[RMDB]
RNA sequence: GGGAACGACUCGAGUAGAGUCGAAAAAUGGAUCGUACGAGGCCUGGCCCGCGGCCGAUCUGCUGGUACGAUCGCUGUGGCCUCGCACUGACGGCCGCGGCCCAGUACUGCGCGGAUCGUACUGGCCGCGGUCCGGCAGGUUCGCCUGCCGGACCGCAAAAGAAACAACAACAACAAC
Reactivity to 2A3 in 0.01 (KOAc 150mM, MgCl2 10mM, bicine 150mM(pH8.5), 24C), signal-to-noise 3, nucleotides 027 to 126: a010u150g030g020a080u060c050g040u110a070c040g060a070g030g060c040c100u090g080g050c020c010c000g010c030g020g010c060c010g000a070u000c040u050g030c010u020g030g000u040a030c000g030a070u080c040g000c050u060g030u060g050g000c020c030u030c050g060c040a170c190u180g070a060c080g000g000c030c000g000c000g000g000c020c000c000a020g030u040a070c060u050g060c080g010c050g110g040a020u020c010g000u040a060c040u090g030g000c010c030
Reactivity to DMS in 0.01 (KOAc 150mM, MgCl2 10mM, bicine 150mM(pH8.5), 24C), signal-to-noise 3, nucleotides 027 to 126: a070u010g010g010a070u000c040g000u000a070c050g010a090g010g010c050c040u000g020g020c100c000c060g020c100g020g000c070c000g000a030u010c040u010g010c030u000g010g020u000a010c040g010a040u000c160g010c000u000g000u000g010g000c000c000u010c070g000c130a090c130u010g010a040c170g010g010c010c000g020c010g010g010c070c040c080a070g010u000a020c040u000g010c180g010c050g000g000a050u000c030g010u000a050c090u000g020g000c010c100